[RMDB]
RNA sequence: GGGAACGACUCGAGUAGAGUCGAAAAAGGGCGGUGGGCCGUCGUUCAGGAGGGAGGGAGAGGAACGCCGCCACCAGCUUACGGGCGGGAUCCAUGCCCGGUUGGUCCUCCGCUUCGGUGAACCCCCGGAUAAUUACUAAUUCGUUAGUAAUUAUCCAAAAGAAACAACAACAACAAC
Reactivity to DMS in 0.01 (KOAc 150mM, MgCl2 10mM, bicine 150mM(pH8.5), 24C), signal-to-noise 8, nucleotides 027 to 126: a110g010g010g000c050g010g010u000g010g010g010c040c020g020u000c050g010u010u000c120a140g010g000a120g000g010g010a160g010g010g000a150g000a140g010g000a050a080c110g020c020c010g000c020c020a060c060c060a090g020c140u000u010a140c150g010g000g000c010g000g000g000a110u000c050c040a100u010g000c010c020c010g010g000u010u000g010g000u000c010c010u000c020c010g000c030u000u010c030g000g010u000g010a170a160c050c010c010c090c120
Reactivity to 2A3 in 0.01 (KOAc 150mM, MgCl2 10mM, bicine 150mM(pH8.5), 24C), signal-to-noise 7, nucleotides 027 to 126: a000g040g010g000c080g010g020u050g020g050g010c030c020g030u040c020g030u100u150c090a070g030g060a050g010g060g030a140g020g050g010a130g020a070g050g040a080a030c080g060c060c000g050c010c010a040c020c010a030g100c040u150u180a050c050g020g010g010c010g010g020g010a020u010c040c010a070u160g020c000c000c020g030g000u030u150g020g020u040c000c000u010c000c000g000c010u100u140c020g020g000u050g040a060a060c010c000c000c000c010